Annotation:
This 177-nucleotide RNA was probed chemically with 2A3 and DMS. Reactivities are given for positions 27 through 126. For DMS, 48,169 sequencing reads were counted. The RNA was probed in 150 mM KOAc, 10 mM MgCl2 and 150 mM bicine (pH 8.5) at 24 C. DMS (dimethyl sulfate) methylates the pairing face of unpaired adenines and cytosines. For 2A3, 40,406 sequencing reads were counted. Source: RMDB library OK1LIB, as collected in RNAgym.

[RMDB]
RNA sequence: GGGAACGACUCGAGUAGAGUCGAAAAUAGAUCCAUGCUGUCCUGAUGUCGAUCUGCUCCAAGACAUCAGUCUUUUGACUAGGCUCUUUUGAGCGACAGCAACGGAGCAGAUUUUGGAUCUAGAAAAGGGAGGCUGGUAGUUCGCUACCAGUUUCCCAAAAGAAACAACAACAACAAC
Reactivity to 2A3 in 0.01 (KOAc 150mM, MgCl2 10mM, bicine 150mM(pH8.5), 24C), signal-to-noise 9, nucleotides 027 to 126: u050a000g000a010u000c010c010a030u110g010c010u020g020u040c010c010u050g030a030u040g030u030c020g020a050u010c010u020g000c000u000c000c010a030a000g000a000c010a020u030c010a020g010u010c010u020u130u090u160g040a040c050u030a050g020g010c000u000c000u030u240u060u220g000a000g000c000g000a010c000a000g000c000a000a010c040g000g000a000g000c000a000g010a020u110u100u010u040g000g000a000u000c000u000a020g060a010a100a010a010
Reactivity to DMS in 0.01 (KOAc 150mM, MgCl2 10mM, bicine 150mM(pH8.5), 24C), signal-to-noise 9, nucleotides 027 to 126: u010a010g000a010u000c000c010a090u020g000c010u000g000u000c030c090u000g000a040u010g010u000c030g010a140u020c020u010g010c000u000c000c070a090a220g000a020c010a050u020c080a080g000u030c010u010u020u030u040g010a060c120u010a080g010g000c020u000c000u010u020u020u040g010a010g010c000g000a040c020a020g000c010a010a000c190g010g000a020g000c000a020g000a170u020u010u010u010g000g000a020u000c000u000a010g000a050a070a100a110